RNA sequence: GGGAACGACUCGAGUAGAGUCGAAAAUACUUCUCGCGCAUCCAGCAGAGCCUCUAGUGCAGGAUCGCGUAGUAGAGCCAAUUCAGGUACUAGAACCCCUACCUCUGGUGUAACACCUGACAUGGCUGAUCAAAUUGCUAGUCUUGUUCUGGCAAAGUCCCCGUAAUUACUUCGGUAAUUACGGGGAAAAAGAAACAACAACAACAAC
Reactivity to 2A3 in 0.01 (KOAc 150mM, MgCl2 10mM, bicine 150mM(pH8.5), 24C), signal-to-noise 1, nucleotides 027 to 156: u080a010c010u050u050c040u010c050g000c000g000c000a000u010c000c000a040g000c000a030g030a080g180c000c090u150c030u110a140g050u020g120c050a000g000g000a000u000c010g000c050g070u040a020g020u010a010g020a020g000c000c000a000a030u020u030c000a010g000g000u040a050c040u110a010g090a170a120c060c020c050c050u020a070c060c010u080c050u010g020g040u110g000u110a130a030c040a010c090c000u000g000a000c010a080u020g000g000c010u020g010a050u130c110a120a070a110u040u010g040c000u000a000g020u000c020u010u050g000u080u000c000u020g010g040c000a000a070a000g080
Reactivity to DMS in 0.01 (KOAc 150mM, MgCl2 10mM, bicine 150mM(pH8.5), 24C), signal-to-noise 2, nucleotides 027 to 156: u010a020c060u000u010c010u000c040g060c070g030c020a040u000c020c040a010g040c000a100g000a120g050c050c090u000c070u000a110g000u000g000c010a090g000g000a010u000c020g050c030g050u000a120g040u000a080g000a160g000c000c000a050a300u010u020c060a060g010g020u000a060c010u000a140g020a080a050c080c020c010c050u000a130c090c040u020c050u040g000g040u010g070u000a130a130c300a020c020c020u020g020a060c140a230u010g010g000c000u000g010a060u000c130a060a110a250u000u000g020c000u000a050g000u000c060u000u010g020u010u010c000u000g000g020c020a080a130a140g000
Chemical mapping of a 207-nucleotide RNA with 2A3 and DMS. The reactions ran in a buffer of 150 mM KOAc, 10 mM MgCl2 and 150 mM bicine (pH 8.5), at 24 C. For 2A3 the reverse transcriptase was SuperScript II with manganese. For DMS, 1,997 sequencing reads were counted.